[RMDB]
Annotation:
This 177-nucleotide RNA was probed chemically with DMS. For DMS, 565 sequencing reads were counted. It was measured as part of the RMDB library OK2TRN. The reactions ran in a buffer of 150 mM KOAc, 10 mM MgCl2 and 150 mM bicine (pH 8.5), at 24 C. Values cover nucleotides 27 to 126.
RNA sequence: GGGAACGACUCGAGUAGAGUCGAAAAAGCCACCAACAUCAACCCCAGACUGAAUUACAUGAUCAGGAGCAUCACUGACGAAAAAGAGUCCGAGAUGUUCGUCACUAAAUUCGCAUCAGCAAGAACCCGUCAGAGUAACGUUCGCGUUACUCUGACGAAAAGAAACAACAACAACAAC
Reactivity to DMS in 0.01 (KOAc 150mM, MgCl2 10mM, bicine 150mM(pH8.5), 24C), signal-to-noise 1, nucleotides 027 to 126: a120g010c020c020a060c030c010a140a000c020a050u020c050a130a160c090c010c000c090a070g000a040c040u000g000a110a080u000u030a090c300a150u020g000a090u020c160a170g000g000a080g020c010a020u010c040a160c070u000g000a020c000g000a050a030a010a150a100g000a140g020u000c040c050g000a080g000a040u000g020u030u000c000g020u000c030a020c080u000a110a060a090u010u020c010g000c030a080u020c080a010g000c070a040a050g010a130a160c160c010